[RMDB]
RNA sequence: GGGAACGACUCGAGUAGAGUCGAAAAAGUUCCCCUAGCACAUGGUAGGGGUGAACUUACACUGCCCAACCUGUAGGGAGAUUGUGAAACCAGAAUGAGAUAAUGUGUGCAAAUGAUUUCGGGACGAGUUUCAAAUUCUGAAAAUUCUUGGGGUGUAACAUAGCGCAAUUUUCGAAUUGCGCUAUGUAAAAGAAACAACAACAACAAC
Reactivity to 2A3 in 0.01 (KOAc 150mM, MgCl2 10mM, bicine 150mM(pH8.5), 24C), signal-to-noise 3, nucleotides 027 to 156: a000g010u050u090c020c000c000c000u020a000g070c040a070c040a220u160g150g030u050a030g010g040g000g010u150g060a040a010c000u000u060a020c080a020c050u110g030c000c000c030a000a040c020c050u060g080u110a070g020g030g000a040g010a050u100u030g040u020g070a080a040a050c030c020a010g070a110a080u100g020a040g020a110u110a110a100u070g040u010g010u020g090c030a030a030a080u080g040a040u020u050u120c030g000g000g010a020c040g020a020g020u000u030u100c060a060a060a050u140u030c020u060g070a060a040a070a140u140u040c020u060u080g020g000g000g000u020g030u010a000
Reactivity to DMS in 0.01 (KOAc 150mM, MgCl2 10mM, bicine 150mM(pH8.5), 24C), signal-to-noise 2, nucleotides 027 to 156: a050g040u000u010c000c000c010c020u000a090g020c030a120c070a100u020g020g010u010a110g050g010g020g060u020g010a040a060c030u000u000a100c070a070c040u000g000c010c010c030a110a080c090c040u000g030u000a110g010g010g000a110g030a080u000u000g010u000g000a110a070a100c060c020a080g000a060a100u000g000a120g000a140u010a070a060u020g010u000g030u010g020c030a050a080a080u010g010a120u000u000u000c040g000g000g010a080c030g020a090g030u000u000u000c040a020a110a080u000u000c000u000g010a040a050a070a120u000u010c050u000u000g010g000g010g010u010g020u000a090